Overview: The record gives the reactivity of an RNA of 177 nucleotides to DMS and 2A3. It was measured as part of the RMDB libraries RFM100 and RFMREP. For 2A3 the reverse transcriptase was SuperScript II with manganese. The reactions ran in a buffer of 150 mM KOAc, 10 mM MgCl2 and 150 mM bicine (pH 8.5), at 24 C.

RNA sequence: GGGAACGACUCGAGUAGAGUCGAAAACUUAGUGAUAUGCGGCCCCUAGGCUUCCUCCUUUGGAUCCUAGUUAUUUUGGGCCUGGUCUUAUACACAACGGUAGUCCAGUGGUAAUUUCAGUAUAAGACGAUGUCUAUGGUUUCGACCAUAGACAUCGAAAAGAAACAACAACAACAAC
Reactivity to DMS in 0.01 (KOAc 150mM, MgCl2 10mM, bicine 150mM(pH8.5), 24C), signal-to-noise 4, nucleotides 027 to 126: c020u000u000a100g000u030g010a080u010a040u020g030c090g000g000c000c000c010c000u000a020g000g000c140u010u000c010c010u020c300c200u010u020u020g000g010a030u020c000c000u000a030g010u020u010a100u010u000u050u030g030g000g000c000c000u020g020g000u000c010u000u000a020u010a010c030a040c130a110a100c230g020g020u010a080g010u000c030c020a090g000u020g010g020u000a080a130u020u000u010c080a120g000u010a060u020a010a050g000a090
Reactivity to 2A3 in 0.01 (KOAc 150mM, MgCl2 10mM, bicine 150mM(pH8.5), 24C), signal-to-noise 5, nucleotides 027 to 126: c020u060u080a040g040u120g140a060u060a070u220g130c050g020g010c000c000c000c000u000a010g010g010c040u060u010c010c010u120c010c090u180u150u150g000g000a010u030c010c010u000a000g000u020u080a220u010u140u130u060g000g000g000c000c000u010g020g000u000c000u010u010a020u010a020c060a000c010a040a050c060g100g000u080a040g100u040c030c040a030g030u080g090g040u070a100a170u040u120u130c050a030g040u040a030u010a150a020g080a040